The record gives the reactivity of an RNA of 177 nucleotides to DMS and 2A3. For DMS, 7,580 sequencing reads were counted. The RNA was probed in 150 mM KOAc, 10 mM MgCl2 and 150 mM bicine (pH 8.5) at 24 C. Reactivities are given for positions 27 through 126.

RNA sequence: GGGAACGACUCGAGUAGAGUCGAAAAAUGGUUCGUGAGUCUGCUGGCUGCCCGCUGUGCCAGCGCUCAUGGGCGGAGGUACAGAAGGAUGCAGAGGACAAGGCUGCUGCUAAAGGCAAGAAGUUACGAUUACUUCAAACUUCGGUUUGAAGUAAUCAAAAGAAACAACAACAACAAC
Reactivity to DMS in 0.01 (KOAc 150mM, MgCl2 10mM, bicine 150mM(pH8.5), 24C), signal-to-noise 5, nucleotides 027 to 126: a070u000g010g010u000u000c030g020u000g000a030g010u000c090u020g040c010u010g000g000c010u000g020c080c020c080g020c110u000g020u010g020c010c000a020g010c010g000c010u000c020a030u000g000g000g010c020g000g000a100g020g010u000a050c080a070g000a120a060g000g010a100u010g010c050a050g020a130g000g010a070c100a070a070g010g010c030u000g000c050u000g020c050u010a050a100a090g010g020c050a070a070g010a060a060g000u000u010a110c210
Reactivity to 2A3 in 0.01 (KOAc 150mM, MgCl2 10mM, bicine 150mM(pH8.5), 24C), signal-to-noise 3, nucleotides 027 to 126: a010u100g040g000u020u040c010g020u020g000a020g030u080c170u260g030c000u010g010g070c030u120g060c030c030c020g080c130u100g060u090g040c000c010a030g000c010g000c000u000c000a010u020g000g010g050c010g020g060a050g010g030u090a050c030a080g080a080a040g100g000a030u080g010c030a020g050a040g070g010a030c040a040a030g070g000c020u050g030c010u000g000c040u140a140a050a020g080g000c030a000a050g080a070a040g070u080u110a050c100